[RMDB]
RNA sequence: GGGAACGACUCGAGUAGAGUCGAAAAUGUAUAUUUGUAAAACUCUUCCAUAACCUUCGAAGAUUUUGGAUUCAUGUAGCUUUCAAAAUUAGGACAGAAAAAGCUAUGUCCUGGGACUUCAACAUAAGGGAAUAGAGGUAUUCGUACCUCUAUUCCCAAAAGAAACAACAACAACAAC
Reactivity to DMS in 0.01 (KOAc 150mM, MgCl2 10mM, bicine 150mM(pH8.5), 24C), signal-to-noise 1, nucleotides 027 to 126: u020g000u000a130u030a080u010u000u000g000u000a050a160a060a100c060u010c020u000u000c020c030a090u000a090a060c080c020u000u000c220g010a170a080g010a070u000u000u020u010g020g000a070u020u000c100a030u010g030u020a140g010c060u000u020u000c050a050a040a050a130u000u030a050g030g030a040c010a000g010a080a150a080a110a050g000c090u010a140u000g000u000c020c030u000g000g020g000a070c130u020u000c060a000a050c090a030u040a070a080